[RMDB]
RNA sequence: GGGAACGACUCGAGUAGAGUCGAAAAGAUAUGGAUAGAGGUGACCCUUCGCAGAUAUCGGAAACGAUGUAGAAGCACCAGUCUAUCCUAAGUCAAAGGAGUAGCGCUCUUCGGAGCGCUACUCCAAUCGUAUCUUGCAGUUCGCUGCAAGAUACGAAAAAGAAACAACAACAACAAC
Reactivity to DMS in 0.01 (KOAc 150mM, MgCl2 10mM, bicine 150mM(pH8.5), 24C), signal-to-noise 1, nucleotides 027 to 126: g000a040u010a300u020g000g010a000u010a000g000a170g000g040u000g000a190c220c240c050u020u000c000g030c160a140g000a070u050a010u010c000g000g000a130a080a120c040g010a000u000g020u010a080g000a030a000g000c010a000c010c000a100g020u000c010u000a000u000c000c010u000a020a030g000u000c040a090a060a160g000g000a030g000u000a010g050c000g000c010u000c000u000u010c280g020g000a010g010c010g020c000u000a010c000u000c000c010a010a040

Source: RMDB library TTRDEL, as collected in RNAgym. Structure probing data (DMS) for a 177-nucleotide construct. Conditions: 150 mM KOAc, 10 mM MgCl2 and 150 mM bicine (pH 8.5), 24 C. For DMS, 972 sequencing reads were counted.